[RMDB]
RNA sequence: GGGAACGACUCGAGUAGAGUCGAAAAACAACAGAUAGCUGGAACCAGCGUAGAAUUCUACGCAUAUCCAUAGCGAAUGGUACCUGUAAAGAAAAUAACGUUGGAUGUACAAGUACCAACAGCCGAUGAUGCCAUGGUGAUGUCAAUCACAUAUGCAGCCCUGCUUUUAUUUCGAUAAAAGCAGGGCAAAAGAAACAACAACAACAAC
Reactivity to 2A3 in 0.01 (KOAc 150mM, MgCl2 10mM, bicine 150mM(pH8.5), 24C), signal-to-noise 1, nucleotides 027 to 156: a000c010a000a000c010a000g110a080u100a070g000c000u030g000g040a110a060c100c020a140g000c010g000u000a000g020a200a300u250u300c010u000a000c000g010c000a000u090a080u130c030c030a030u060a010g040c020g030a050a050u080g060g000u000a010c000c140u020g040u040a090a000a000g070a060a020a000a030u190a090a110c140g040u020u040g000g070a020u020g010u020a020c010a060a000g000u000a010c000c000a000a010c010a040g020c000c010g080a040u040g010a040u060g030c040c000a020u020g020g090u000g000a040u020g100u210c070a070a090u010c000a080c000a010u130a040u060g030c090a010